Conditions: 150 mM KOAc, 10 mM MgCl2 and 150 mM bicine (pH 8.5), 24 C.
Chemical mapping of a 177-nucleotide RNA with DMS and 2A3.
For 2A3, 1,488 sequencing reads were counted.
Reactivities are rounded to 0.1 and cut off at 0 and 3.
2A3 adducts were read by reverse transcription with SuperScript II with manganese.
For DMS the reverse transcriptase was MarathonRT.
[RMDB]
RNA sequence: GGGAACGACUCGAGUAGAGUCGAAAACCACUGGGAGCAAGGCAUUAGGGCGUACCGUCGUUUCAGACGGUAUGUCUGCACGAACGCUUGAAGGCUGCUCGCCUGAGUUCGUGGGUAGCUGCUUGAGGACUAUAGGUCGGUUCGCCGACCUAUAGUCAAAAGAAACAACAACAACAAC
Reactivity to DMS in 0.01 (KOAc 150mM, MgCl2 10mM, bicine 150mM(pH8.5), 24C), signal-to-noise 2, nucleotides 027 to 126: c010c010a160c140u000g020g000g000a020g000c030a060a040g010g030c040a140u010u020a190g020g010g010c000g000u000a010c000c000g020u010c000g020u000u010u010c300a100g000a010c000g000g000u010a000u000g010u000c000u000g000c030a020c000g000a040a010c010g010c240u000u010g000a080a040g000g020c000u000g000c230u000c260g000c000c010u000g000a050g020u000u000c010g040u000g000g060g000u000a090g010c050u000g020c010u000u000g000a100g020
Reactivity to 2A3 in 0.01 (KOAc 150mM, MgCl2 10mM, bicine 150mM(pH8.5), 24C), signal-to-noise 2, nucleotides 027 to 126: c020c020a020c100u100g060g120g000a020g060c030a130a080g170g010c040a050u080u170a080g050g000g000c010g030u000a010c010c000g000u000c030g040u090u300u280c040a030g010a000c000g000g000u020a000u000g010u010c000u000g000c000a000c010g010a030a000c030g030c110u040u140g070a020a000g030g000c030u110g080c060u170c250g000c020c000u020g060a020g010u050u040c040g000u020g030g040g060u060a040g010c000u030g000c020u000u030g060a050g150